[RMDB]
RNA sequence: GGGAACGACUCGAGUAGAGUCGAAAAAAAUCUAUAUGCCAUUAUUGAUGCAAUUCAAGAUUUAUUUGGUGUAAGUGAGCAUGAACUUAUGUCGUUGUUAAAACAAAUUUUAAAAAAUGAAGUGGCAUCCCUAUUGCCUAUUCGUAGGCAAUAGGGAAAAAGAAACAACAACAACAAC
Reactivity to DMS in 0.01 (KOAc 150mM, MgCl2 10mM, bicine 150mM(pH8.5), 24C), signal-to-noise 1, nucleotides 027 to 126: a040a050a010u020c010u000a050u030a120u000g030c050c010a060u020u020a160u030u000g010a040u000g050c240a050a030u030u000c140a010a030g000a160u000u000u010a010u010u000u000g000g000u000g020u000a050a000g010u000g000a050g100c240a030u030g000a100a070c050u010u000a030u010g000u010c060g000u040u000g050u000u010a040a020a040a110c110a000a090a060u000u000u040u010a000a030a080a010a090a040u000g000a020a020g000u040g020g010c120a070
Reactivity to 2A3 in 0.01 (KOAc 150mM, MgCl2 10mM, bicine 150mM(pH8.5), 24C), signal-to-noise 2, nucleotides 027 to 126: a000a000a000u120c070u010a190u020a000u010g000c110c030a050u030u050a010u010u270g090a060u040g050c110a110a150u150u130c030a040a000g240a150u030u080u120a030u000u150u130g030g070u060g010u000a030a030g000u000g040a070g180c160a140u120g120a060a040c000u030u040a030u040g040u000c010g080u090u000g090u070u190a080a080a000a000c020a040a020a050u080u110u090u110a150a300a000a060a020a240u110g050a050a050g000u000g000g000c000a000
This 177-nucleotide RNA was probed chemically with DMS and 2A3. The RNA was probed in 150 mM KOAc, 10 mM MgCl2 and 150 mM bicine (pH 8.5) at 24 C. It was measured as part of the RMDB library OK1LIB. For DMS the reverse transcriptase was MarathonRT. For 2A3 the reverse transcriptase was SuperScript II with manganese.